The record gives the reactivity of an RNA of 177 nucleotides to 2A3 and DMS. Conditions: 150 mM KOAc, 10 mM MgCl2 and 150 mM bicine (pH 8.5), 24 C.
[RMDB]
RNA sequence: GGGAACGACUCGAGUAGAGUCGAAAAUACAAACACCUUGGAUGUUCUUUAAAUAAGAUGAAAAGGCUAUUAUUCUAAUGAACAACAUGAAGCCAAAAGAAAAUCCAAGGCGUUUGCAGAAAGAGGUAACAUAUGCCUUUUUCGAAAGGCAUAUGUUAAAAGAAACAACAACAACAAC
Reactivity to 2A3 in 0.01 (KOAc 150mM, MgCl2 10mM, bicine 150mM(pH8.5), 24C), signal-to-noise 9, nucleotides 027 to 126: u150a020c000a000a000a000c000a010c010c000u000u000g000g000a010u010g030u080u050c000u030u040u070a170a200a160u230a130a140g090a150u220g130a070a100a040a080g010g000c020u030a080u170u060a100u120u090c060u120a110a110u160g070a090a050c070a060a020c020a120u120g070a050a000g000c010c000a010a070a000a000g010a000a030a000a000u000c000c000a000a000g000g000c000g000u000u000u000g020c020a010g140a040a100a010g120a030g070g100u030
Reactivity to DMS in 0.01 (KOAc 150mM, MgCl2 10mM, bicine 150mM(pH8.5), 24C), signal-to-noise 3, nucleotides 027 to 126: u060a140c000a020a010a010c000a040c010c000u000u000g000g000a020u000g000u010u000c000u000u030u000a060a090a140u060a070a150g020a170u040g010a060a080a110a070g000g010c010u010a100u010u040a120u000u020c050u030a040a100u030g000a080a100c140a060a110c240a070u010g000a060a040g000c010c020a080a020a010a030g000a010a020a050a010u000c010c000a010a010g000g020c050g010u000u000u000g010c130a060g000a070a080a050g000a090g020g020u020